RNA sequence: GGGAACGACUCGAGUAGAGUCGAAAAUGCAGCGACAACAAGAACAACCUUAACCACCGAGGAGGAUGCCGUUCUGGGGCCCCAAGAUAACUCACAAUUUGUGGCCGCUGCAACUCGCGACUUGCAACGCACAUCUCGCCACGCGGCAAAGGCGAAACGUAAUUACCCCAUUCGUGGGGUAAUUACGAAAAGAAACAACAACAACAAC
Reactivity to 2A3 in 0.01 (KOAc 150mM, MgCl2 10mM, bicine 150mM(pH8.5), 24C), signal-to-noise 1, nucleotides 027 to 156: u040g010c000a000g000c020g070a050c070a140a020c020a080a050g060a140a020c070a060a060c020c000u110u110a090a080c000c050a040c000c070g090a170g010g000a000g050g030a020u040g040c000c060g000u070u020c030u030g040g000g040g000c000c010c000c030a020a050g040a090u200a090a100c020u080c120a050c060a130a120u000u000u050g010u030g030g010c000c000g000c010u010g020c000a010a030c020u050c050g020c040g050a120c070u090u080g030c020a070a020c020g090c010a090c010a110u090c020u030c040g030c020c010a020c100g010c020g000g000c000a040a000a000g010g000c000g060a030a010a010

Structure probing data (2A3) for a 207-nucleotide construct. 2A3 is a SHAPE reagent: it acylates the 2'-hydroxyl of flexible nucleotides of all four kinds. The RNA was probed in 150 mM KOAc, 10 mM MgCl2 and 150 mM bicine (pH 8.5) at 24 C. Values cover nucleotides 27 to 156. Source: RMDB library OK3TST, as collected in RNAgym.